About this RNA
The record gives the reactivity of an RNA of 207 nucleotides to 2A3 and DMS. The RNA was probed in 150 mM KOAc, 10 mM MgCl2 and 150 mM bicine (pH 8.5) at 24 C.
RNA sequence: GGGAACGACUCGAGUAGAGUCGAAAAACAUGCUGGCCAACACAACCCCACGAUCCUCCAUCGGCAUGAUCAUGAUGUGUUCUCAAAUAUCAGGCCAGUAAAUCACCAUGCUCGUGCUGGUAAAGGCAACUUAUGCCCAAGUUCGCUUGGGCAUAAAAGAUAUGGUAUCGUUCGCGAUACCAUAUCUAAAAGAAACAACAACAACAAC
Reactivity to 2A3 in 0.01 (KOAc 150mM, MgCl2 10mM, bicine 150mM(pH8.5), 24C), signal-to-noise 6, nucleotides 027 to 156: a000c040a010u060g000c000u000g000g000c020c010a090a030c070a040c030a120a190c040c040c020c030a050c090g080a100u080c010c020u040c040c030a070u060c000g000g000c010a010u020g000a000u010c000a000u010g060a070u090g040u010g020u080u010c040u020c020a070a110a020u280a110u140c090a060g010g000c010c000a000g000u020a010a030a040u100c010a010c040c000a000u010g000c010u000c020g010u000g000c010u010g010g000u040a130a120a020g020g000c020a040a030c060u010u010a000u000g000c000c000c000a010a000g010u050u070c080g020c120u000u010g080g000g010c000a000u000a000a010a000
Reactivity to DMS in 0.01 (KOAc 150mM, MgCl2 10mM, bicine 150mM(pH8.5), 24C), signal-to-noise 2, nucleotides 027 to 156: a080c020a120u000g020c010u000g020g020c010c020a160a120c120a120c070a120a160c020c000c000c020a070c150g000a120u000c000c010u000c000c000a060u000c040g000g020c030a030u000g010a050u020c030a060u000g010a050u020g020u000g010u000u020c040u010c020a130a070a160u000a130u000c090a100g020g020c000c010a030g020u000a010a020a090u010c020a050c000c010a030u000g020c090u000c010g070u000g050c000u010g030g000u000a020a050a050g010g030c110a090a080c080u000u000a020u000g000c010c000c010a020a020g020u000u000c290g000c020u000u000g000g000g040c000a020u010a000a000a050

Values cover nucleotides 27 to 156. It was measured as part of the RMDB library M2RFOK. For DMS the reverse transcriptase was MarathonRT.